[RMDB]
RNA sequence: GGGAACGACUCGAGUAGAGUCGAAAAGAAGUCAAGGUUGAGGACAAUUCCAACUUCAGCCUACAGGACAUGAUUGGUGAGGUUAUCCUCAGCUUGAAAUCUGAUGAACUGUUUGAACAAGCUGUGGGUUGACGUUGGGUUUCGACCCAACGUCAACAAAAGAAACAACAACAACAAC
Reactivity to 2A3 in 0.01 (KOAc 150mM, MgCl2 10mM, bicine 150mM(pH8.5), 24C), signal-to-noise 2, nucleotides 027 to 126: g170a020a000g090u040c100a160a000g070g040u000u010g040a000g010g000a050c080a220a080u300u010c010c030a010a010c100u040u070c040a000g040c000c000u070a070c130a040g010g040a000c010a060u250g070a000u200u000g120g000u120g010a050g150g000u000u050a000u120c000c000u000c030a010g000c030u000u000g070a040a040a040u040c000u160g100a120u190g080a160a230c240u010g080u030u020u170g000a070a140c010a000a010g050c010u030g000u090g070g060
Structure probing data (2A3) for a 177-nucleotide construct. Conditions: 150 mM KOAc, 10 mM MgCl2 and 150 mM bicine (pH 8.5), 24 C. For 2A3, 504 sequencing reads were counted. Reactivities are given for positions 27 through 126.